Chemical mapping of a 207-nucleotide RNA with DMS and 2A3. For 2A3 the reverse transcriptase was SuperScript II with manganese. The RNA was probed in 150 mM KOAc, 10 mM MgCl2 and 150 mM bicine (pH 8.5) at 24 C. For DMS, 2,579 sequencing reads were counted.

RNA sequence: GGGAACGACUCGAGUAGAGUCGAAAAGAAGCAGGGUCAGGAACGACGAAUCUCUUUAUGAUAAACAGAUCCAUUUUGCAAGUUCGUUAUUACGGGUAGUUCCUACAAAGGAUCGGACUAAUGACGUAUACAAUACUUGAAUUCUCGAUGUAGAUGCCAUCUCCUGCUAGUUCGCUAGCAGGAGAUGAAAAGAAACAACAACAACAAC
Reactivity to DMS in 0.01 (KOAc 150mM, MgCl2 10mM, bicine 150mM(pH8.5), 24C), signal-to-noise 2, nucleotides 027 to 156: g030a120a060g030c040a090g010g030g020u000c020a100g050g020a030a080c060g030a100c050g030a030a100u000c020u000c030u000u000u000a120u040g000a150u000a060a050a110c070a060g000a060u000c030c010a170u010u010u020u010g030c050a060a080g000u000u000c010g030u000u000a080u000u010a070c030g020g000g020u000a050g010u010u000c030c010u000a210c210a040a110a030g000g010a040u000c040g020g040a120c050u000a060a010u000g010a030c050g040u000a100u000a090c110a050a120u000a100c050u020u000g030a030a110u000u000c050u000c000g040a090u000g030u010a100g010a150u000g000c060
Reactivity to 2A3 in 0.01 (KOAc 150mM, MgCl2 10mM, bicine 150mM(pH8.5), 24C), signal-to-noise 3, nucleotides 027 to 156: g080a010a010g000c050a040g010g000g000u030c030a020g020g070a060a020c040g060a020c020g030a130a080u020c040u000c010u090u180u060a150u140g110a060u120a090a130a020c030a040g030a030u010c040c020a040u070u090u020u120g010c020a010a040g000u020u040c010g020u010u030a070u040u050a080c060g020g000g030u020a030g010u060u020c000c000u030a070c140a040a120a010g010g000a020u030c040g050g260a010c020u060a100a010u080g020a010c050g060u050a020u050a100c110a080a030u030a100c020u050u070g060a070a070u150u030c080u020c060g080a070u100g010u070a030g010a050u060g040c010